Background:
An RNA of 177 nucleotides, treated with DMS and 2A3 and read out base by base. Reactivities are given for positions 27 through 126. The 2A3 profile rests on 1,170 reads. For DMS the reverse transcriptase was MarathonRT. For DMS, 2,069 sequencing reads were counted.
RNA sequence: GGGAACGACUCGAGUAGAGUCGAAAACGCGUCCUGUUCGCAGGACGCGAAUUAAGGAAACCUUCGUGGUGGCGAGAAUAAAUGAGCACUCGCGCUCAUAAAAUAGGUGGGCGUUCGCGCCCACCAAUUCUUGAUUCAGAUUCGUCUGAAUCAAGAAAAAAGAAACAACAACAACAAC
Reactivity to DMS in 0.01 (KOAc 150mM, MgCl2 10mM, bicine 150mM(pH8.5), 24C), signal-to-noise 2, nucleotides 027 to 126: c010g010c000g010u000c000c000u000g030u000u030c170g010c000a030g010g010a010c010g030c000g000a020a020u010u000a130a110g030g030a120a050a060c020c010u010u010c130g010u000g000g010u000g010g060c010g010a040g010a090a050u010a040a160a110u010g000a010g010c000a090c070u000c060g020c020g000c010u000c000a080u010a060a060a080a100u010a090g020g020u000g000g000g010c000g010u000u010c210g010c020g000c000c000c010a000c000c000a020a030
Reactivity to 2A3 in 0.01 (KOAc 150mM, MgCl2 10mM, bicine 150mM(pH8.5), 24C), signal-to-noise 2, nucleotides 027 to 126: c000g010c000g020u020c010c030u020g000u020u050c290g030c020a000g000g070a000c000g010c020g000a000a020u090u060a110a000g000g000a080a040a040c000c000u090u130c210g050u150g120g030u030g080g020c010g020a030g070a270a080u120a210a150a080u150g010a020g010c010a010c090u060c060g010c050g000c010u000c020a050u150a080a140a060a040u210a060g010g010u020g060g000g000c000g000u030u090c160g000c000g000c070c000c000a000c010c010a030a000

For 2A3 the reverse transcriptase was SuperScript II with manganese.